[RMDB]
RNA sequence: GGGAACGACUCGAGUAGAGUCGAAAAAGGGCCGGGUGGUCGCGAUGGUGGGUGACGGCGUCAACGACGCGCCCGCCUUGGUACAAGCCGAUCUGGGCAUUGCGAUCGGCACCGGUACCGACGUGGCUACGUCGGAGCAUUUCGAUGCUCCGACGUAAAAAGAAACAACAACAACAAC
Reactivity to 2A3 in 0.01 (KOAc 150mM, MgCl2 10mM, bicine 150mM(pH8.5), 24C), signal-to-noise 3, nucleotides 027 to 126: a000g060g030g000c050c010g030g020g060u040g030g000u040c010g020c030g010a030u070g030g030u020g020g050g010u070g030a150c070g000g050c010g050u090c070a220a220c110g050a010c000g000c000g000c010c010c000g000c010c000u010u060g040g000u060a050c050a080a010g000c020c000g020a130u080c100u260g100g100g000c080a080u070u140g010c000g010a020u000c020g020g010c050a070c000c010g010g000u100a300c010c010g000a010c030g110u120g030g000c060
Reactivity to DMS in 0.01 (KOAc 150mM, MgCl2 10mM, bicine 150mM(pH8.5), 24C), signal-to-noise 3, nucleotides 027 to 126: a150g000g010g020c020c010g010g020g040u000g020g010u000c000g000c010g010a030u000g010g010u010g000g000g010u010g010a190c040g010g010c020g010u010c300a100a200c050g020a030c010g000c050g010c000c000c000g020c000c000u000u000g010g000u000a070c090a080a070g000c000c000g000a090u010c150u010g010g000g000c060a040u000u000g020c050g000a010u000c000g030g030c040a020c060c020g000g000u000a030c000c000g000a160c100g000u010g000g010c130
Record summary:
The data come from the RNA Mapping Database (RMDB), library OK2TRN. Structure probing data (2A3 and DMS) for a 177-nucleotide construct. For DMS, 4,425 sequencing reads were counted. DMS adducts were read by reverse transcription with MarathonRT. The reactions ran in a buffer of 150 mM KOAc, 10 mM MgCl2 and 150 mM bicine (pH 8.5), at 24 C.